[RMDB]
RNA sequence: GGGAACGACUCGAGUAGAGUCGAAAAUAUGAUUUUACUGAUUUCAAGCUAGAGCUCUUCACUAAGUAUUUUAAGCAUUGGAGUAUGACCUACCACCCGAACACCUGUGAGUGCGAGGAUGACAGGUGCAUUAUUCAUUGCGCCAAUUUUAAUAUACACCUCAUCUAAGAUUCGUCUUAGAUGAGGUAAAAGAAACAACAACAACAAC
Reactivity to 2A3 in 0.01 (KOAc 150mM, MgCl2 10mM, bicine 150mM(pH8.5), 24C), signal-to-noise 4, nucleotides 027 to 156: u170a050u070g060a050u050u100u090u140a090c040u060g070a090u090u060u200c100a110a030g010c020u080a040g010a030g090c000u010c030u110u070c060a040c090u090a080a020g030u040a160u040u150u030u070a110a010g010c020a010u000u070g020g000a030g020u030a010u010g030a000c000c010u010a030c000c060a000c020c000c010g020a030a010c010a020c010c020u190g140u140g220a110g110u010g030c010g000a030g000g000a020u020g020a010c060a070g000g000u050g140c000a000u020u030a060u050u100c020a030u020u030g010c030g000c020c000a010a010u040u070u070u140a150a160u100a020u010a100c040
Reactivity to DMS in 0.01 (KOAc 150mM, MgCl2 10mM, bicine 150mM(pH8.5), 24C), signal-to-noise 2, nucleotides 027 to 156: u010a140u020g000a090u000u000u000u000a100c040u000g010a130u000u020u000c040a040a260g030c030u000a070g010a090g000c000u000c050u000u000c030a080c060u000a100a110g020u000a020u000u000u000u000a040a180g010c060a060u010u000g000g000a050g030u010a030u000g020a090c030c020u000a030c070c010a010c010c020c000g010a130a040c010a020c010c050u000g040u000g020a150g070u000g010c050g010a300g000g010a040u000g020a050c040a040g000g040u010g020c060a050u000u010a060u000u000c050a140u010u010g060c010g020c050c060a050a030u000u000u000u000a030a100u000a080u000a090c090

About this RNA
The data come from the RNA Mapping Database (RMDB), library OK3TST. The record gives the reactivity of an RNA of 207 nucleotides to 2A3 and DMS. For 2A3 the reverse transcriptase was SuperScript II with manganese. Conditions: 150 mM KOAc, 10 mM MgCl2 and 150 mM bicine (pH 8.5), 24 C.